[RMDB]
RNA sequence: GGGAACGACUCGAGUAGAGUCGAAAAAGCAGCUGGUGUACGCACCAGCUGCACCGGCUCUCACGAACAAUCCCGCCCGGAGUUUACCGUACUUGAUCUCUUGCGCGGACCUACGGGUGCCCAGAAAGAUUUCAAGACCUUUCGAGGUCUUGAAAUCAAAAGAAACAACAACAACAAC
Reactivity to DMS in 0.01 (KOAc 150mM, MgCl2 10mM, bicine 150mM(pH8.5), 24C), signal-to-noise 1, nucleotides 027 to 126: a140g020c000a000g060c010u000g000g000u000g000u000a210c120g040c000a000c000c000a000g030c010u000g010c000a000c060c000g000g000c000u000c000u000c030a300c000g010a070a030c040a080a300u010c000c160c000g020c010c000c070g010g030a050g000u000u020u010a000c000c000g000u040a270c010u080u030g000a090u000c230u030c000u000u000g070c100g000c040g000g000a200c070c000u000a070c030g000g000g000u000g000c010c030c050a080g000a110a080a050
Reactivity to 2A3 in 0.01 (KOAc 150mM, MgCl2 10mM, bicine 150mM(pH8.5), 24C), signal-to-noise 5, nucleotides 027 to 126: a000g010c010a000g000c010u010g000g020u010g020u040a040c270g030c070a010c000c010a000g020c000u000g000c000a000c000c000g000g000c000u000c000u000c010a070c030g040a060a020c030a030a090u020c000c000c000g000c010c010c000g040g000a030g010u050u110u160a170c020c010g040u050a060c050u070u090g200a300u170c160u030c010u140u070g040c060g000c010g040g040a060c000c000u000a000c010g000g000g000u060g020c000c010c000a080g100a040a110a000